[RMDB]
RNA sequence: GGGAACGACUCGAGUAGAGUCGAAAAACUGUGUUCUGACAGACUGUUAUGAUUUCCGUUCUUUUGCAUUUGCUGAGGAGUGUUUUAUUUCCUAUUAUGUGGUCAAUUUUAGAAUAAGUAUGAUGUGAUCAGGGUCUAGAUUCGUCUAGACCCUGAUAAAAGAAACAACAACAACAAC
Reactivity to DMS in 0.01 (KOAc 150mM, MgCl2 10mM, bicine 150mM(pH8.5), 24C), signal-to-noise 2, nucleotides 027 to 126: a080c050u010g000u030g020u000u000c040u000g010a090c160a110g020a070c100u020g020u000u010a050u010g020a100u010u000u000c090c060g000u010u010c030u020u010u010u010g000c040a110u000u010u000g010c060u000g000a070g010g000a020g000u010g000u000u000u000u000a090u010u020u000c010c010u000a080u000u000a070u010g000u010g020g010u000c060a060a080u000u000u000u030a090g000a030a050u010a040a140g020u000a090u000g020a090u020g000u000g010

The data come from the RNA Mapping Database (RMDB), library OK2TST. Chemical mapping of a 177-nucleotide RNA with DMS. The RNA was probed in 150 mM KOAc, 10 mM MgCl2 and 150 mM bicine (pH 8.5) at 24 C.